The record gives the reactivity of an RNA of 177 nucleotides to 2A3 and DMS.
The DMS profile rests on 8,035 reads.
Values cover nucleotides 27 to 126.
The reactions ran in a buffer of 150 mM KOAc, 10 mM MgCl2 and 150 mM bicine (pH 8.5), at 24 C.
It was measured as part of the RMDB library OK1LIB.

RNA sequence: GGGAACGACUCGAGUAGAGUCGAAAAUCAGUUUCACCACUCGAACUAGCAGGGAGGUGUGGGAUACAUAGUACCUUGGUGCCUACCAUCUCUGUAUGGAAGACGUCGCGGGCAUUCUUGGAAGGUCCAACGGAUUCCUUUUCGAAGGAAUCCGUUGAAAAGAAACAACAACAACAAC
Reactivity to 2A3 in 0.01 (KOAc 150mM, MgCl2 10mM, bicine 150mM(pH8.5), 24C), signal-to-noise 7, nucleotides 027 to 126: u100c020a030g040u020u060u050c050a050c050c010a050c030u030c030g060a100a040c030u030a080g040c040a060g030g040g030a090g000g060u200g040u130g080g030g030a030u060a110c040a040u180a040g070u150a130c020c030u030u060g040g000u030g020c000c000u030a060c010c020a130u010c060u000c030u090g080u180a070u060g020g030a040a050g080a050c060g050u070c040g000c050g030g010g010c010a050u160u010c040u040u070g050g020a100a030g050g010u040c030
Reactivity to DMS in 0.01 (KOAc 150mM, MgCl2 10mM, bicine 150mM(pH8.5), 24C), signal-to-noise 4, nucleotides 027 to 126: u020c120a130g000u010u000u010c050a130c050c010a040c060u020c070g000a140a130c080u000a140g000c060a110g000g010g000a130g000g000u020g010u020g000g000g000a040u000a060c120a080u010a130g020u020a050c090c060u000u010g010g020u000g000c010c040u010a100c030c020a070u000c000u000c060u000g020u040a060u020g000g010a120a060g000a080c080g010u010c090g020c100g020g000g000c050a040u000u020c040u010u000g000g010a070a070g010g000u020c040